[RMDB]
RNA sequence: GGGAACGACUCGAGUAGAGUCGAAAAGAAAGAAAAAUACACGGGUCCACUUGGCGUCUGUUCCUAAGCCGCCUACAGUAAUUCAAUAAGUGGGUCAUAGGAUACUGUAGUCCUGUGUUAAAGAAAAGGGUGUGCUAAUGUUCGCAUUAGCACACCCAAAAGAAACAACAACAACAAC
Reactivity to 2A3 in 0.01 (KOAc 150mM, MgCl2 10mM, bicine 150mM(pH8.5), 24C), signal-to-noise 1, nucleotides 027 to 126: g120a000a030a100g240a000a060a010a000a090u150a000c000a000c100g000g000g000u010c020c020a050c080u020u080g090g000c000g000u000c030u020g140u000u000c000c000u010a030a020g000c000c000g020c000c000u000a000c000a060g000u000a060a060u040u010c050a000a150u110a190a150g170u080g060g100g000u000c000a000u050a010g000g000a010u000a050c000u000g110u220a010g080u040c090c000u040g000u000g060u130u090a070a090a000g300a100a060a020a000